[RMDB]
RNA sequence: GGGAACGACUCGAGUAGAGUCGAAAACAUAGCUGCAAAUAUAAACUCGCUGCUGCCAAUAGGAAAUAAUCCCGCAUAAAUAUUGAGUAUCUGAAAAUGAUAGCAACGGGUUUCCAUUUUUGAAAUAGCGAUUACACAGGUUCGCCUGUGUAAUCGCAAAAGAAACAACAACAACAAC
Reactivity to 2A3 in 0.01 (KOAc 150mM, MgCl2 10mM, bicine 150mM(pH8.5), 24C), signal-to-noise 1, nucleotides 027 to 126: c000a040u090a010g130c030u160g000c000a000a160a000u150a030u130a070a160a000c000u010c080g000c000u030g000c000u000g000c000c060a120a000u080a070g210g090a070a130a000u290a000a120u020c000c000c000g100c000a040u140a070a060a000u050a000u020u130g030a070g120u030a020u000c030u000g150a000a000a000a250u260g000a030u030a000g080c080a030a030c000g000g000g000u000u000u000c050c000a220u000u000u000u060u100g180a120a160a110u040a030
Conditions: 150 mM KOAc, 10 mM MgCl2 and 150 mM bicine (pH 8.5), 24 C. The record gives the reactivity of an RNA of 177 nucleotides to 2A3.